Structure probing data (2A3 and DMS) for a 177-nucleotide construct.
Conditions: 150 mM KOAc, 10 mM MgCl2 and 150 mM bicine (pH 8.5), 24 C.
It was measured as part of the RMDB library M2PK90.
Values cover nucleotides 27 to 126.
RNA sequence: GGGAACGACUCGAGUAGAGUCGAAAAGUAAAGGCGAGUGAGAAGAUCACAGAAUGCCAAAAGCACGCUUAGAAACGGACAUCUCUGAGCAAAAGUGCACGCAAUAAGCGAAAGUUGCCGAAAAAAAAUCCUGUCAAUGAUUCGUCAUUGACAGGAUAAAAGAAACAACAACAACAAC
Reactivity to 2A3 in 0.01 (KOAc 150mM, MgCl2 10mM, bicine 150mM(pH8.5), 24C), signal-to-noise 2, nucleotides 027 to 126: g050u040a080a060a030g010g020c030g010a070g030u010g020a000g020a170a140g070a100u020c000a000c030a030g230a140a060u230g000c000c000a050a030a000a020g020c010a000c030g000c010u020u010a010g000a000a220a010c040g060g040a010c010a140u020c050u000c020u100g030a030g030c000a000a100a160a050g020u010g020c010a010c040g010c020a050a260u110a290a050g010c010g060a020a090a060g060u080u070g000c020c050g060a010a000a000a000a000a000a000
Reactivity to DMS in 0.01 (KOAc 150mM, MgCl2 10mM, bicine 150mM(pH8.5), 24C), signal-to-noise 2, nucleotides 027 to 126: g010u000a050a060a160g010g050c030g020a140g040u000g010a000g000a100a110g000a170u010c030a030c040a120g010a150a110u010g030c010c030a090a050a050a070g020c020a060c050g000c010u000u000a030g000a040a070a040c100g000g010a080c140a090u010c070u000c020u010g000a100g020c070a040a030a030a110g000u000g020c130a080c010g000c050a090a070u000a080a100g030c030g000a090a060a100g010u000u010g000c010c030g030a020a000a000a030a060a080a120